[RMDB]
RNA sequence: GGGAACGACUCGAGUAGAGUCGAAAAUAGUGCCACAAAUUGUAGAUGUCGUUUCAAUUCCGGUCAUUGCCGCUGGUGGAAUUAUGGACGGUAGAGGAGUUUUGGCAAGUAUUGUCUUAGGUGCAGAGAUGUACUAUCUGUUCGCAGAUAGUACAUCAAAAGAAACAACAACAACAAC
Reactivity to DMS in 0.01 (KOAc 150mM, MgCl2 10mM, bicine 150mM(pH8.5), 24C), signal-to-noise 7, nucleotides 027 to 126: u030a060g010u020g010c010c010a060c220a040a030a060u010u020g020u020a050g010a140u010g010u000c010g000u000u000u010c050a050a100u010u000c020c010g020g000u010c070a070u020u010g000c020c020g020c090u000g020g010u020g000g000a060a030u020u030a120u020g020g010a030c010g000g000u000a040g010a160g000g000a040g010u010u000u000u010g000g000c030a030a110g010u010a040u010u010g010u000c030u010u020a070g010g020u000g000c040a090g000a220
Reactivity to 2A3 in 0.01 (KOAc 150mM, MgCl2 10mM, bicine 150mM(pH8.5), 24C), signal-to-noise 8, nucleotides 027 to 126: u070a000g090u040g030c010c000a060c120a040a100a050u150u190g090u190a090g040a140u070g010u060c040g020u000u040u150c060a060a050u050u010c020c000g030g030u070c090a120u050u210g050c050c040g010c070u050g000g080u090g040g040a030a020u150u080a080u190g040g000a000c020g000g010u030a040g030a040g090g020a030g020u030u020u090u080g030g030c010a020a010g100u090a130u070u130g060u010c080u040u130a110g050g020u110g040c070a010g040a000
Overview
An RNA of 177 nucleotides, treated with DMS and 2A3 and read out base by base. The RNA was probed in 150 mM KOAc, 10 mM MgCl2 and 150 mM bicine (pH 8.5) at 24 C. It was measured as part of the RMDB library OK1LIB. The 2A3 profile rests on 7,178 reads. For DMS the reverse transcriptase was MarathonRT.